[RMDB]
RNA sequence: GGGAACGACUCGAGUAGAGUCGAAAAUGUGCAUUCUGAGUUCAAUUUGCCAGGUUGUGAUGGCGGUAGUUUGUAUGUUAACAAGCACGCUUUUCAUACACCAGCAUAUGAUGUGAGUGCAUUCCGUCCAUCUCAUUGUCUUCGGACAAUGAGAUGGAAAAGAAACAACAACAACAAC
Reactivity to 2A3 in 0.01 (KOAc 150mM, MgCl2 10mM, bicine 150mM(pH8.5), 24C), signal-to-noise 2, nucleotides 027 to 126: u140g000u000g020c000a000u000u000c030u090g170a140g140u030u030c030a080a230u050u010u030g050c060c060a120g000g000u000u000g010u000g000a000u010g000g000c040g000g020u080a080g000u020u010u030g050u020a100u100g200u100u150a120a010c010a000a000g000c000a000c000g000c000u190u130u030u000c020a000u000a020c020a000c000c000a000g020c000a010u000a020u060g010a020u020g040u000g070a000g000u000g000c010a000u050u040c010c000g010u020